[RMDB]
RNA sequence: GGGAACGACUCGAGUAGAGUCGAAAAUCCUCCGCCCUUUUUCUUCCAGACACCCACUGCUCGAGGACGUCCUCCCUUCCCCCUCGAGCCUUCUUCGAGUCGGACCGGCUCAUCUCGGCAGAGGGCGCUAUAAUCUGGACUUCGGUCCAGAUUAUAGAAAAGAAACAACAACAACAAC
Reactivity to DMS in 0.01 (KOAc 150mM, MgCl2 10mM, bicine 150mM(pH8.5), 24C), signal-to-noise 1, nucleotides 027 to 126: u000c030c010u010c080c040g010c010c010c020u010u010u000u010u010c040u000u010c040c030a110g010a100c110a080c040c050c100a200c030u010g000c010u010c000g030a040g020g010a170c080g010u000c060c060u010c000c000c030u020u000c000c010c000c030c030u010c020g000a090g020c020c020u010u010c010u000u000c060g010a030g000u000c090g040g000a150c100c030g020g010c050u010c030a050u000c020u020c060g000g020c150a050g010a040g000g010g020c040g050